[RMDB]
RNA sequence: GGGAACGACUCGAGUAGAGUCGAAAACUGGUUGAGGCCAUGGUGGAGAAAGGUCAGGAUGGCUCUGCCGUGCUUGAGCUCGACCUUUGCAAUCGUGAUGUAUCGCGUAUCACAUUUUUCCAGAAAGCCACCGAUAUAGGUUCGCCUAUAUCGGUGGAAAAGAAACAACAACAACAAC
Reactivity to 2A3 in 0.01 (KOAc 150mM, MgCl2 10mM, bicine 150mM(pH8.5), 24C), signal-to-noise 2, nucleotides 027 to 126: c000u020g000g000u000u020g020a010g080g080c020c010a000u020g000g020u010g010g000a030g040a030a130a020g110g040u140c080a080g140g090a170u150g140g030c000u000c010u020g020c000c030g020u010g010c030u130u080g020a070g090c000u000c000g040a010c000c000u030u070u080g030c040a050a080u060c070g020u040g010a020u020g050u110a110u240c090g010c050g120u050a050u040c000a000c000a000u060u000u060u030u060c020c000a060g130a080a060a020g050
Reactivity to DMS in 0.01 (KOAc 150mM, MgCl2 10mM, bicine 150mM(pH8.5), 24C), signal-to-noise 3, nucleotides 027 to 126: c120u010g020g010u010u000g000a050g030g020c070c020a020u000g000g020u020g000g010a040g000a080a080a090g010g000u000c090a090g000g000a120u000g010g030c000u000c010u000g010c020c030g020u000g010c200u020u020g000a140g000c000u000c020g000a010c010c000u010u000u000g020c210a080a080u000c160g010u000g010a040u000g020u010a080u010c150g040c160g000u000a040u000c000a020c020a100u000u000u000u000u010c000c010a190g000a100a090a170g010
An RNA of 177 nucleotides, treated with 2A3 and DMS and read out base by base. Conditions: 150 mM KOAc, 10 mM MgCl2 and 150 mM bicine (pH 8.5), 24 C. For 2A3, 2,212 sequencing reads were counted. For DMS, 2,479 sequencing reads were counted.